Chemical mapping of a 177-nucleotide RNA with 2A3 and DMS. The DMS profile rests on 1,239 reads. The RNA was probed in 150 mM KOAc, 10 mM MgCl2 and 150 mM bicine (pH 8.5) at 24 C. The data come from the RNA Mapping Database (RMDB), library RFM100.
[RMDB]
RNA sequence: GGGAACGACUCGAGUAGAGUCGAAAAAACAAACGUUUUACCGGUUUGUAAAUUGGAAUUCUCGAAUUCGCCAGUCGCCUUCUUCGUAUCAAGGAUCUGGAAUUUGAACGGUAUCUUUAUCAUUUUAAUACCUAUCGCAGUUCGCUGCGAUAGGUAUAAAAGAAACAACAACAACAAC
Reactivity to 2A3 in 0.01 (KOAc 150mM, MgCl2 10mM, bicine 150mM(pH8.5), 24C), signal-to-noise 3, nucleotides 027 to 126: a010a000c000a000a010a000c000g000u020u020u020u130a010c000c000g010g010u000u000u000g020u040a090a140a140u140u100g180g080a060a050u030u000c020u000c060g030a100a160u180u070c070g040c020c000a020g040u110c050g080c060c000u050u090c020u100u120c090g140u050a110u300c110a010a010g030g010a060u080c020u010g000g080a030a060u110u070u140g070a040a000c020g000g000u000a000u020c050u040u280u100a130u070c030a100u020u000u070u020a060
Reactivity to DMS in 0.01 (KOAc 150mM, MgCl2 10mM, bicine 150mM(pH8.5), 24C), signal-to-noise 1, nucleotides 027 to 126: a050a080c010a000a040a040c040g000u000u040u010u000a000c030c010g000g000u000u080u070g000u000a020a050a140u010u080g000g020a210a260u060u010c010u020c000g020a060a070u000u000c100g050c000c090a000g030u020c280g010c000c040u000u000c000u000u000c240g010u000a090u010c130a090a010g000g010a040u010c010u000g000g020a040a000u030u040u050g000a020a190c090g020g000u010a000u000c130u090u040u040a060u030c020a050u030u000u000u000a060